[RMDB]
RNA sequence: GGGAACGACUCGAGUAGAGUCGAAAAUUUGCGUGGUAUCUGAAGGGUAGGUGGGUGCCCGGAGCGGUCUACGCCUUCUACGGGAUGUGGCCUCUCCUCCUGCUCCUGCUGGCGUUGCCUCAGCGGGCAUACGCACUGGACACGGAGGUGGCCGCGUUGGAAUCUGAUCUUUCGAGAUCAGAUUCCAAAAAGAAACAACAACAACAAC
Reactivity to 2A3 in 0.01 (KOAc 150mM, MgCl2 10mM, bicine 150mM(pH8.5), 24C), signal-to-noise 1, nucleotides 027 to 156: u120u100u090g040c020g000u000g000g000u160a030u130c060u220g010a040a040g000g000g020u070a170g060g040u070g030g000g030u000g000c000c000c000g030g000a000g030c080g050g000u030c060u100a030c060g040c050c000u080u110c000u040a140c070g140g000g000a120u080g020u020g000g000c000c030u010c050u010c010c000u060c000c000u030g000c050u020c000c000u020g070c110u100g150g000c000g050u020u000g050c000c000u090c100a190g070c220g000g000g000c000a050u090a120c010g010c010a010c010u000g000g000a010c000a010c170g000g000a000g010g000u010g000g000c000c000g010c000g000u000